[RMDB]
RNA sequence: GGGAACGACUCGAGUAGAGUCGAAAAAUGUCCUCGAUAUGUCUUGUAUUUACUUGCACUGCUUCUGAAUACGUGUCGUCGAGAGGAUUCGUGGACAGUGAAGAGACCGAAUCUUCUAGAGAAUAUACGUCGAUGGAGGCUUCGGCCUCCAUCGACGAAAAGAAACAACAACAACAAC
Reactivity to 2A3 in 0.01 (KOAc 150mM, MgCl2 10mM, bicine 150mM(pH8.5), 24C), signal-to-noise 1, nucleotides 027 to 126: a000u070g190u090c000c000u000c000g140a080u000a090u290g020u010c070u070u000g060u020a090u070u200u020a100c090u010u090g000c120a020c060u090g040c000u000u030c010u050g020a120a000u060a030c000g000u020g000u100c060g000u000c020g040a010g000a000g070g080a070u000u000c000g010u030g050g140a050c020a040g070u020g300a060a080g010a000g040a100c000c000g000a000a000u000c000u060u000c000u000a000g000a000g010a300a000u130a080u000a180